[RMDB]
RNA sequence: GGGAACGACUCGAGUAGAGUCGAAAAAGCGCUAGGCCUACUACGGUAGGCCUAGCGCAAGUGGCUGACGGGAGGCGGAGCAGCGAACGAGGGCGUCGGCCAUUUUGUGCCUGUUUCCUGUGGGAAAUUGUAUUGACUCAUUCGUGAGUCAAUACAAAAAAGAAACAACAACAACAAC
Reactivity to 2A3 in 0.01 (KOAc 150mM, MgCl2 10mM, bicine 150mM(pH8.5), 24C), signal-to-noise 1, nucleotides 027 to 126: a000g030c000g030c000u000a000g000g050c000c020u000a020c010u020a060c300g080g030u000a000g000g020c000c000u010a000g000c040g000c000a000a000g000u000g000g020c010u010g030a020c000g000g050g040a090g100g030c140g000g040a100g040c120a030g040c070g050a030a060c080g030a070g000g130g020c000g000u030c040g030g000c000c020a020u040u080u050u110g060u060g050c030c010u020g000u000u000u020c020c000u060g000u200g140g000g000a000a230a010
Reactivity to DMS in 0.01 (KOAc 150mM, MgCl2 10mM, bicine 150mM(pH8.5), 24C), signal-to-noise 1, nucleotides 027 to 126: a090g010c000g040c010u090a000g030g060c020c030u000a020c000u000a090c160g040g030u020a020g050g020c050c000u030a000g000c130g180c030a000a020g000u000g000g000c000u000g010a070c080g000g000g000a060g000g000c040g000g020a110g000c050a060g020c100g000a130a050c060g000a080g000g010g010c010g000u010c020g010g020c010c000a040u000u040u020u000g000u010g000c020c000u000g000u020u000u000c010c000u010g040u020g000g000g000a050a040a070